Structure probing data (DMS and 2A3) for a 177-nucleotide construct.
[RMDB]
RNA sequence: GGGAACGACUCGAGUAGAGUCGAAAACUCGAAAGAGACCUGCAUAUCUUAGGCAGAUGACCAAGUCACGUCUGAAAAGCGAAAGCCCUAAGAUAUGCAGCUGUGAUGACUUGCCGCAGAAAAUAAAAGUCAUACUACGGUUCGCCGUAGUAUGACUAAAAGAAACAACAACAACAAC
Reactivity to DMS in 0.01 (KOAc 150mM, MgCl2 10mM, bicine 150mM(pH8.5), 24C), signal-to-noise 1, nucleotides 027 to 126: c000u000c020g000a080a100a060g030a020g020a230c250c000u000g020c000a000u000a000u000c000u000u000a000g020g050c060a000g000a000u000g000a140c150c000a020a000g040u020c050a300c000g000u000c000u000g050a140a040a120a120g000c070g000a100a090a110g030c000c000c020u000a030a000g000a030u000a000u020g000c000a010g050c050u010g000u000g000a080u000g000a000c000u000u000g000c300c020g000c050a030g000a200a050a000a130u060a030a060a130
Reactivity to 2A3 in 0.01 (KOAc 150mM, MgCl2 10mM, bicine 150mM(pH8.5), 24C), signal-to-noise 3, nucleotides 027 to 126: c010u010c010g070a010a020a000g080a000g050a080c000c000u000g000c000a010u000a000u000c000u000u000a000g000g000c000a000g000a070u000g010a020c060c000a000a000g020u040c000a000c060g010u000c000u020g160a250a210a140a030g010c040g030a070a040a000g020c000c000c000u010a010a000g000a000u000a000u000g000c020a000g000c000u000g010u020g020a050u060g000a000c000u000u020g020c020c020g000c010a000g170a070a100a070a000u300a040a130a030

Background:
The data come from the RNA Mapping Database (RMDB), library OK1LIB. The DMS profile rests on 1,392 reads. The 2A3 profile rests on 2,874 reads. DMS (dimethyl sulfate) methylates the pairing face of unpaired adenines and cytosines. High 2A3 reactivity points to a flexible backbone, as in loops and unpaired stretches.